[RMDB]
RNA sequence: GGGAACGACUCGAGUAGAGUCGAAAAGGGCGGAUGAGACGGAGAAGACAUGGCAACAGAUCAGGACAACGACGGCCUCAAGCGGGGGCUGAAGAAUCGCCACAUUCAACUGAUCGCGCUCGGCGGAUAAUGCCGGUGAUUUCGAUCACCGGCAUUAAAAAGAAACAACAACAACAAC
Reactivity to DMS in 0.01 (KOAc 150mM, MgCl2 10mM, bicine 150mM(pH8.5), 24C), signal-to-noise 1, nucleotides 027 to 126: g040g000g040c050g000g010a040u000g000a060g000a080c250g030g000a140g000a010a040g000a070c090a090u000g060g010c080a130a020c070a090g010a080u000c070a080g000g010a210c060a100a050c090g020a250c040g000g000c010c050u010c130a050a120g010c130g000g000g000g010g000c030u000g000a020a130g020a080a100u000c080g040c050c030a020c070a080u000u000c130a060a100c050u010g000a040u000c030g010c170g020c040u010c050g010g030c090g000g000a140